[RMDB]
RNA sequence: GGGAACGACUCGAGUAGAGUCGAAAAUAGUGACUGUCGAUGGUGUAAAUUUUAGAACAGUCGUUCUAAAUAAUAAGAACACUUAUAGAUCACAGCUUGGAUGCGUUUUCUUUAAUGGUGCUGAUAUAAGACAUAAGUAGUUCGCUACUUAUGUCUUAAAAGAAACAACAACAACAAC
Reactivity to 2A3 in 0.01 (KOAc 150mM, MgCl2 10mM, bicine 150mM(pH8.5), 24C), signal-to-noise 2, nucleotides 027 to 126: u070a000g030u020g040a020c020u030g000u070c070g070a070u080g050g050u020g000u020a070a130a160u020u010u020u020a020g000a000a000c010a090g260u120c110g010u020u010c000u000a000a020a020u130a030a040u080a110a100g110a130a000c010a000c020u060u070a090u100a130g080a030u040c030a020c000a030g040c020u040u060g070g040a040u050g030c020g040u050u060u030u000c030u020u060u110a090a090u090g040g010u040g030c030u020g030a030u050a010u020
Reactivity to DMS in 0.01 (KOAc 150mM, MgCl2 10mM, bicine 150mM(pH8.5), 24C), signal-to-noise 3, nucleotides 027 to 126: u010a110g020u000g010a070c060u000g020u010c150g010a100u010g010g010u000g000u000a060a110a120u000u000u000u000a020g000a020a000c020a240g020u010c220g010u000u000c000u000a010a010a030u000a060a100u010a080a140g000a140a060c010a020c020u000u010a100u000a090g010a090u000c010a030c030a100g010c030u000u000g030g000a050u000g010c050g000u000u000u000u000c010u000u010u010a060a060u010g000g010u000g020c030u000g010a080u010a090u000
The record gives the reactivity of an RNA of 177 nucleotides to 2A3 and DMS. The DMS profile rests on 5,076 reads. 2A3 adducts were read by reverse transcription with SuperScript II with manganese. For 2A3, 1,628 sequencing reads were counted.